[RMDB]
RNA sequence: GGGAACGACUCGAGUAGAGUCGAAAAGCAGUGAUCCCACCUCCAGAGGACCCCUUCAGCGAACAGAAGACCACCAGACGCGAUAGGAGUAAGACCAUAGCGAUGGGAGGAGAUGCUAGGAGUUAGAACCCCUGAAAUAGUUCGCUAUUUCAGGGGUAAAAGAAACAACAACAACAAC
Reactivity to DMS in 0.01 (KOAc 150mM, MgCl2 10mM, bicine 150mM(pH8.5), 24C), signal-to-noise 1, nucleotides 027 to 126: g020c030a100g000u020g020a080u000c000c010c030a280c110c000u000c000c030a120g020a120g010g000a100c040c050c080c060u000u000c040a070g000c000g020a050a080c140a170g010a050a050g010a140c040c020a120c030c050a000g000a120c030g000c030g000a070u010a040g000g030a120g010u010a070a100g010a030c030c030a050u000a100g040c060g000a120u030g000g000g020a070g030g000a070g000a100u000g010c050u010a010g000g010a010g000u010u000a080g000a100